[RMDB]
RNA sequence: GGGAACGACUCGAGUAGAGUCGAAAACGCCUGAAGUCUUUCAUCGGUGGAAUGCUUUUAUUUGUGCUGUGCCGUUUCGUGUAUUGUAACCCGGGUUUUGUAAUUGCGGUUUGUCAGAUUCUGGGAUGUGUUCUGUUUAUUGUAGGAUUGGUAGCGAUCUUACAUUCAAGUUCGCUUGAAUGUAAGAAAAAGAAACAACAACAACAAC
Reactivity to DMS in 0.01 (KOAc 150mM, MgCl2 10mM, bicine 150mM(pH8.5), 24C), signal-to-noise 2, nucleotides 027 to 156: c080g020c030c030u000g010a070a110g000u000c030u000u000u000c020a040u010c060g040g020u010g000g010a090a070u010g010c020u000u010u000u010a070u010u020u000g020u000g010c010u000g030u000g020c000c030g040u000u000u010c030g000u000g010u000a080u000u010g020u000a110a100c030c030c030g010g020g030u000u000u010u010g010u010a050a080u010u000g000c040g030g020u000u000u010g010u000c030a090g000a120u010u000c060u010g000g020g010a090u000g010u000g010u000u000c020u050g020u000u000u010a060u020u000g030u000a090g020g010a120u000u000g020g010u000a060g010c050g020a140
Reactivity to 2A3 in 0.01 (KOAc 150mM, MgCl2 10mM, bicine 150mM(pH8.5), 24C), signal-to-noise 3, nucleotides 027 to 156: c090g040c030c030u040g050a050a020g050u030c020u040u120u130c120a090u100c090g070g000u040g030g070a090a080u080g000c010u060u130u060u150a200u090u180u150g090u050g030c030u040g050u070g060c050c020g010u010u050u090c040g000u040g040u040a120u120u120g050u090a060a050c030c050c000g020g020g000u020u130u070u040g050u050a090a070u070u080g000c020g000g040u050u040u050g050u050c020a010g010a090u110u030c020u080g020g030g010a070u020g040u020g000u070u000c030u010g060u030u120u070a080u070u040g030u050a010g030g030a040u020u060g030g040u040a020g000c000g030a000

An RNA of 207 nucleotides, treated with DMS and 2A3 and read out base by base. DMS adducts were read by reverse transcription with MarathonRT. The 2A3 profile rests on 1,763 reads. Conditions: 150 mM KOAc, 10 mM MgCl2 and 150 mM bicine (pH 8.5), 24 C.